Description: This 177-nucleotide RNA was probed chemically with 2A3 and DMS. DMS adducts were read by reverse transcription with MarathonRT. Source: RMDB library OK2TST, as collected in RNAgym.
RNA sequence: GGGAACGACUCGAGUAGAGUCGAAAAUUGUUUCACAGUUUGAGAUGCUAAAGUCUAAGCAAAUUGAGUUAACAGUUCAGAUGGCGUCUUACGAAGGAGAUUUGAACCAAAAUUUAUGUGAUUUUCAAUCCUAAAUAGCGUUCGCGCUAUUUAGGAUAAAAGAAACAACAACAACAAC
Reactivity to 2A3 in 0.01 (KOAc 150mM, MgCl2 10mM, bicine 150mM(pH8.5), 24C), signal-to-noise 2, nucleotides 027 to 126: u050u010g000u010u090u060c000a010c000a030g030u060u080u070g030a020g000a030u010g020c020u130a230a110a000g060u010c050u070a120a000g040c000a050a080a030u110u100g060a060g070u070u120a100a010c010a030g000u030u050c030a010g000a060u040g080g010c010g060u000c020u030u050a050c040g040a100a040g090g050a080g000a010u050u040u040g030a030a010c000c000a050a040a040a100u090u140u070a140u080g020u010g090a050u020u060u060u040c030a030
Reactivity to DMS in 0.01 (KOAc 150mM, MgCl2 10mM, bicine 150mM(pH8.5), 24C), signal-to-noise 5, nucleotides 027 to 126: u000u000g010u000u010u000c030a120c040a100g010u010u010u010g000a070g010a080u000g020c040u020a100a110a150g020u000c060u010a120a080g000c060a040a050a100u000u000g010a100g010u010u000a070a110c170a100g000u000u010c050a030g020a090u000g000g010c030g030u000c050u010u000a080c160g020a100a120g000g000a070g020a050u000u020u000g000a110a120c030c030a040a080a060a100u000u020u010a050u020g010u010g010a130u010u000u000u000c080a110
The RNA was probed in 150 mM KOAc, 10 mM MgCl2 and 150 mM bicine (pH 8.5) at 24 C.